RNA sequence: GGGAACGACUCGAGUAGAGUCGAAAAGUGUUUGCUAACAUCUCUGCCUUGAAAGCAACUACUGUCGGGGAUGAUAAUGGACAGUGCAAAGUUCUAGCCUAUCCUGCAGGCAUAACUGAAAUGAAGAAUGGAAUAGAUCAUUCGUGAUCUAUUCCAUAAAAGAAACAACAACAACAAC
Reactivity to DMS in 0.01 (KOAc 150mM, MgCl2 10mM, bicine 150mM(pH8.5), 24C), signal-to-noise 7, nucleotides 027 to 126: g010u000g000u000u000u000g020c030u010a080a160c060a030u000c030u000c030u000g020c060c030u000u000g010a080a110a120g010c110a060a090c090u000a110c060u000g010u000c030g010g000g010g010a120u000g010a040u010a090a050u010g020g010a030c010a010g020u010g020c070a070a090a100g010u000u000c110u000a150g000c000c010u000a080u000c030c030u000g010c070a020g010g010c020a020u000a050a090c060u000g000a070a070a110u000g010a090a080g010a110
Reactivity to 2A3 in 0.01 (KOAc 150mM, MgCl2 10mM, bicine 150mM(pH8.5), 24C), signal-to-noise 5, nucleotides 027 to 126: g030u030g030u040u030u030g020c020u030a050a050c010a040u020c020u000c010u050g050c030c000u040u070g110a140a090a030g080c050a050a040c020u150a020c020u030g040u070c000g010g000g030g030a080u060g020a040u130a090a050u100g010g000a010c020a020g040u040g130c020a040a110a060g040u100u040c030u070a030g000c000c000u010a040u040c000c000u020g000c020a000g030g010c010a010u070a050a030c060u070g090a040a050a160u130g040a080a060g100a080
Source: RMDB library OK2TST, as collected in RNAgym. Chemical mapping of a 177-nucleotide RNA with DMS and 2A3. Reactivities are given for positions 27 through 126. The RNA was probed in 150 mM KOAc, 10 mM MgCl2 and 150 mM bicine (pH 8.5) at 24 C. 2A3 is a SHAPE reagent: it acylates the 2'-hydroxyl of flexible nucleotides of all four kinds. DMS adducts were read by reverse transcription with MarathonRT.